[RMDB]
Structure probing data (DMS) for a 177-nucleotide construct. DMS adducts were read by reverse transcription with MarathonRT. The RNA was probed in 150 mM KOAc, 10 mM MgCl2 and 150 mM bicine (pH 8.5) at 24 C. Source: RMDB library OK2TRN, as collected in RNAgym.
RNA sequence: GGGAACGACUCGAGUAGAGUCGAAAAGCGUUUUUGAGCUACAAGAACGAAGAGCAUACUUAGUCAAAGUAUGCAGAAGCCUUCUGUAGCUCAGAGGGCAGGACUAAUCUUUGACUAAGAUUAGGGAGCGAUGCAUUUAGUUCGCUAAAUGCAUCGCAAAAGAAACAACAACAACAAC
Reactivity to DMS in 0.01 (KOAc 150mM, MgCl2 10mM, bicine 150mM(pH8.5), 24C), signal-to-noise 2, nucleotides 027 to 126: g010c050g010u010u000u000u000u000g000a060g020c010u010a010c000a060a130g000a020a020c100g020a080a040g020a300g000c010a010u000a000c000u000u000a070g010u020c220a070a080a040g020u000a020u000g000c000a000g030a180a160g000c030c070u000u000c000u000g010u000a010g040c020u000c010a010g000a000g020g000g000c000a100g000g020a120c030u000a010a020u000c000u000u000u010g050a100c300u010a040a010g000a000u000u000a010g010g000g030a180